[RMDB]
RNA sequence: GGGAACGACUCGAGUAGAGUCGAAAAACAGUCAGUACGCUGACUGAGGGAAACGGGAGCCGGGCUUGGGACAAGAGCCAUCCCAAGUCCAAGACCAAGUAGGCUCUAGUGAUGGUACGCCAUCACAAAAACUGGUCUACCUUCGGGUAGACCAGAACUCAAUACACGGCUUCGGCCGUGUAUUGAGAAAAGAAACAACAACAACAAC
Reactivity to 2A3 in 0.01 (KOAc 150mM, MgCl2 10mM, bicine 150mM(pH8.5), 24C), signal-to-noise 2, nucleotides 027 to 156: a000c000a000g000u000c000a000g010u050a030c200g030c080u010g000a000c010u010g010a080g000g050g010a110a130a140c140g000g050g030a030g170c140c060g020g000g010c000u000u000g000g000g010a000c030a110a070g000a010g040c000c000a010u000c000c000c000a000a000g010u000c010c000a000a010g020a000c010c030a010a050g040u090a080g130g000c000u000c000u010a030g000u000g000a000u000g010g020u050a050c240g040c090c000a000u010c000a000c000a000a020a010a000a000c000u000g030g000u000c000u000a000c000c010u060u090c260g090g020g010u000a000g000a000c000c000a000g000a000a000
An RNA of 207 nucleotides, treated with 2A3 and read out base by base. Values cover nucleotides 27 to 156. The reactions ran in a buffer of 150 mM KOAc, 10 mM MgCl2 and 150 mM bicine (pH 8.5), at 24 C. High 2A3 reactivity points to a flexible backbone, as in loops and unpaired stretches.